Conditions: 150 mM KOAc, 10 mM MgCl2 and 150 mM bicine (pH 8.5), 24 C.
Structure probing data (2A3 and DMS) for a 207-nucleotide construct.
The 2A3 profile rests on 560 reads.

RNA sequence: GGGAACGACUCGAGUAGAGUCGAAAAUAGGUAGGAAAUAGAACGUUACACAAUCCCACCUGGGGAUGGCGUGGACUGCCACCAAACCGAUGAUUACCAGAGCUGCGGUUAGCUUUAAGUUCCGCAUGAUGUCUGUAUUGGACGCGAUUCAAGUGAGCCCGUUCGAUAUUUUCGAAUAUCGAACGGGAAAAGAAACAACAACAACAAC
Reactivity to 2A3 in 0.01 (KOAc 150mM, MgCl2 10mM, bicine 150mM(pH8.5), 24C), signal-to-noise 1, nucleotides 027 to 156: u110a000g000g010u060a070g000g070a070a000a180u050a060g110a060a000c020g000u050u120a060c080a000c010a050a120u000c040c020c020a070c000c140u120g030g020g060g020a020u000g060g000c070g000u000g000g020a000c010u060g000c000c000a000c000c000a010a010a020c020c010g050a080u110g040a030u010u180a040c090c000a000g000a030g050c070u110g010c040g000g000u080u090a040g010c000u110u110u110a090a050g020u090u000c000c000g000c010a010u010g030a080u080g050u070c000u020g020u090a070u020u110g100g000a030c030g000c010g090a010u000u020c040a090a060g000u020g040a070g000
Reactivity to DMS in 0.01 (KOAc 150mM, MgCl2 10mM, bicine 150mM(pH8.5), 24C), signal-to-noise 1, nucleotides 027 to 156: u010a060g040g010u030a020g040g010a030a110a230u000a200g000a150a090c060g030u000u010a140c060a040c040a140a060u010c000c010c000a060c110c040u000g060g000g050g070a040u000g000g020c020g110u000g010g010a140c060u000g010c060c030a080c000c040a040a110a210c050c030g010a110u010g010a090u000u010a130c080c000a100g000a140g050c010u000g000c020g010g000u000u000a060g040c060u000u010u000a130a160g000u000u010c010c040g000c070a150u000g000a040u020g010u000c000u000g020u010a160u000u000g000g000a090c090g020c040g000a130u000u000c060a000a140g010u000g000a120g010